Background:
The record gives the reactivity of an RNA of 177 nucleotides to 2A3 and DMS. The RNA was probed in 150 mM KOAc, 10 mM MgCl2 and 150 mM bicine (pH 8.5) at 24 C. For DMS the reverse transcriptase was MarathonRT.
RNA sequence: GGGAACGACUCGAGUAGAGUCGAAAAUUUUGGACAGCAGUAUUAGUAAAGUGUAAGAAAAUUGUCAAAGCUUGGAGCUAUGCUUGUUGAACUUUUGUACCAAUAGCACCUUUACCAGAGGCUGCGUGCUAACAAGUAUGUUCGCAUACUUGUUAGCAAAAGAAACAACAACAACAAC
Reactivity to 2A3 in 0.01 (KOAc 150mM, MgCl2 10mM, bicine 150mM(pH8.5), 24C), signal-to-noise 4, nucleotides 027 to 126: u050u020u010u080g050g040a030c000a000g000c010a010g020u010a020u200u030a020g020u050a040a040a030g030u040g030u100a100a040g080a090a090a090a160u150u180g140u120c020a070a080a030g000c020u030u050g070g020a030g020c010u070a060u100g020c020u080u100g090u070u030g030a020a030c030u040u020u040u110g060u070a070c020c010a010a030u020a060g010c000a010c000c000u020u020u030a070c050c030a030g010a010g060g010c010u000g000c000g000u020
Reactivity to DMS in 0.01 (KOAc 150mM, MgCl2 10mM, bicine 150mM(pH8.5), 24C), signal-to-noise 4, nucleotides 027 to 126: u020u010u000u010g010g010a160c070a080g000c010a030g010u000a060u020u000a070g010u000a060a030a040g000u010g010u000a090a130g010a060a060a090a030u010u000g020u010c040a030a070a100g010c030u020u010g020g020a100g000c020u030a090u010g020c020u000u020g000u010u000g000a020a070c040u000u000u020u000g030u020a100c160c070a030a020u020a120g010c070a030c050c040u000u000u010a060c050c120a070g010a060g020g010c110u000g000c020g050u000